[RMDB]
RNA sequence: GGGAACGACUCGAGUAGAGUCGAAAACUGGUAAGCCGAGUUGGCGAGUAGCGCCGAGUGGAGUAAAGACGGAGAACCUCUCGAAAGAGACUGACUCCGCUUCCUCCGGCCGCUCCCGUCUUCCGAGCUACUUUAGUUGGUUCGCCAACUAAAGUAGAAAAGAAACAACAACAACAAC
Reactivity to DMS in 0.01 (KOAc 150mM, MgCl2 10mM, bicine 150mM(pH8.5), 24C), signal-to-noise 2, nucleotides 027 to 126: c020u000g000g030u000a080a070g030c070c020g000a070g020u000u000g010g010c030g000a060g000u000a000g020c020g020c000c000g020a130g010u030g000g000a050g000u010a030a040a080g000a230c000g030g010a000g000a030a200c290c290u000c000u000c000g020a120a090a180g000a030g010a020c050u010g000a300c000u010c000c000g020c010u020u000c030c000u000c010c020g000g010c090c080g030c000u000c010c010c010g000u000c010u010u010c020c020g000a110g000
Reactivity to 2A3 in 0.01 (KOAc 150mM, MgCl2 10mM, bicine 150mM(pH8.5), 24C), signal-to-noise 1, nucleotides 027 to 126: c020u050g060g150u180a100a010g050c040c050g020a030g190u030u030g030g000c030g020a050g020u060a000g000c000g000c000c010g030a080g020u030g000g000a030g030u100a010a050a020g080a110c010g020g000a010g000a030a010c000c000u000c000u000c000g010a040a090a040g000a000g000a000c010u020g070a010c000u000c000c000g000c000u030u010c000c000u010c000c020g010g010c090c020g000c000u010c000c010c000g000u010c000u040u030c010c010g020a040g030
An RNA of 177 nucleotides, treated with DMS and 2A3 and read out base by base.